[RMDB]
Source: RMDB library TTRDES, as collected in RNAgym. This 177-nucleotide RNA was probed chemically with DMS and 2A3. DMS adducts were read by reverse transcription with MarathonRT.
RNA sequence: GGGAACGACUCGAGUAGAGUCGAAAAAAGAUAUGGAGGAAAGUGUGCGGUAAUACCAUAAUCACAGGUAUGUCGGAAACGACAUACUCACAGUUAUGGUGCCAGCACAAUUUCCUCCUAAGUCAAAGUGCAAUAUACGGUUCGCCGUAUAUUGCACAAAAGAAACAACAACAACAAC
Reactivity to DMS in 0.01 (KOAc 150mM, MgCl2 10mM, bicine 150mM(pH8.5), 24C), signal-to-noise 1, nucleotides 027 to 126: a170a070g000a020u000a300u010g010g010a020g020g000a000a000a010g000u000g000u000g040c010g020g020u000a090a100u000a180c010c000a000u010a000a000u000c120a170c300a210g000g010u010a000u000g010u000c000g010g010a110a090a130c020g000a020c010a000u000a000c010u000c040a130c300a220g010u000u000a020u000g000g020u000g000c020c010a090g010c010a020c000a010a020u000u000u000c000c000u000c000c020u000a000a010g000u000c040a090a070a170
Reactivity to 2A3 in 0.01 (KOAc 150mM, MgCl2 10mM, bicine 150mM(pH8.5), 24C), signal-to-noise 2, nucleotides 027 to 126: a000a000g070a020u090a010u110g000g000a020g020g000a010a000a000g020u020g020u020g040c000g030g040u100a160a060u100a270c010c020a020u020a010a020u170c040a020c020a110g040g000u010a000u010g020u000c010g020g010a020a060a080c030g000a000c000a010u010a000c010u100c010a080c010a000g000u000u000a020u020g020g000u000g070c040c000a030g030c010a000c010a000a020u000u010u000c000c010u000c000c010u020a070a000g020u000c050a150a040a010

Source information: For DMS, 1,229 sequencing reads were counted. The 2A3 profile rests on 3,434 reads.